[RMDB]
RNA sequence: GGGAACGACUCGAGUAGAGUCGAAAAGUUGGAAGAUACCAGGGUAGGUGUUCCUUGGGGAAUCUUCGACCUCCCUGGUGAUUGGGUACUGCUGCCCACUGAUGCAGUUCGUUCGAUUGGGGAUCCACAUCCACCGUAGUUUCGACUACGGUGGAUGAAAAGAAACAACAACAACAAC
Reactivity to DMS in 0.01 (KOAc 150mM, MgCl2 10mM, bicine 150mM(pH8.5), 24C), signal-to-noise 2, nucleotides 027 to 126: g010u010u000g010g000a140a110g000a120u000a010c010c000a020g000g010g020u030a020g010g010u010g010u000u000c010c020u000u010g010g020g010g000a060a040u000c250u030u020c230g000a040c010c010u000c000c000c000u000g000g010u000g000a030u010u000g000g010g010u000a050c080u000g030c060u010g000c050c060c040a070c090u000g010a080u000g010c030a040g010u020u000c100g010u000u000c050g040a130u000u010g000g020g010g000a140u000c030c100a130

The record gives the reactivity of an RNA of 177 nucleotides to DMS. Source: RMDB library OK2TST, as collected in RNAgym.